[RMDB]
RNA sequence: GGGAACGACUCGAGUAGAGUCGAAAAGAUAUGGAGACCCGUGUUCCUCUAUGAAGACAUCGGAAACGAUGUUGGAGAGGGCACGCUCCUAAGUCAAAAGCAACGUGUAGUUCGCUACACGUUGCAAGCAAGUAAAAAAGUUCGCUUUUUUACUUGCAAAAGAAACAACAACAACAAC
Reactivity to 2A3 in 0.01 (KOAc 150mM, MgCl2 10mM, bicine 150mM(pH8.5), 24C), signal-to-noise 6, nucleotides 027 to 126: g000a020u070a050u170g020g010a020g030a070c080c140c150g010u010g000u240u300c070c000u090c020u100a300u280g010a020a000g010a010c000a000u000c000g030g020a010a040a050c010g000a000u000g000u010u010g000g000a010g000a000g010g000g000c000a000c010g000c000u000c000c000u040a170a070g050u050c050a130a080a040a020g000c010a000a010c010g000u010g000u000a020g010u050u100c290g020c130u000a000c000a000c000g000u000u000g000c000a000a000
Reactivity to DMS in 0.01 (KOAc 150mM, MgCl2 10mM, bicine 150mM(pH8.5), 24C), signal-to-noise 6, nucleotides 027 to 126: g010a040u000a300u000g010g000a010g010a210c150c300c080g010u000g010u000u010c000c000u000c010u000a220u010g010a150a130g000a000c000a000u000c000g000g000a100a080a220c000g010a010u000g010u000u000g000g010a010g010a000g010g000g000c000a000c020g000c020u000c010c000u000a040a110g000u000c050a110a090a130a140g010c010a000a010c010g010u010g020u000a010g010u000u010c230g010c000u000a000c000a010c000g000u000u000g010c000a020a050